[RMDB]
RNA sequence: GGGAACGACUCGAGUAGAGUCGAAAAGAUAUGGACGUAGUGUAUGGAGCUGUGCUCGGAAACGAGCAUACAGCUAUGAAGUACCUACGUCCUAAGUCAAAACCGAACAGAGUUCGCUCUGUUCGGACACCAUCCAGAGCUUCGGCUCUGGAUGGUGAAAAGAAACAACAACAACAAC
Reactivity to 2A3 in 0.01 (KOAc 150mM, MgCl2 10mM, bicine 150mM(pH8.5), 24C), signal-to-noise 1, nucleotides 027 to 126: g000a010u030a040u030g000g000a010c020g000u010a000g010u000g060u300a020u010g300g250a030g000c000u010g000u040g000c010u000c040g000g000a030a000a030c000g010a020g000c030a000u100a040c000a000g020c040u000a300u300g300a130a070g030u000a010c000c000u040a010c000g010u000c000c000u000a000a000g000u000c020a000a000a080a120c020c000g000a000a000c000a000g010a000g030u120u120c170g160c130u000c000u000g010u000u000c000g000g030a030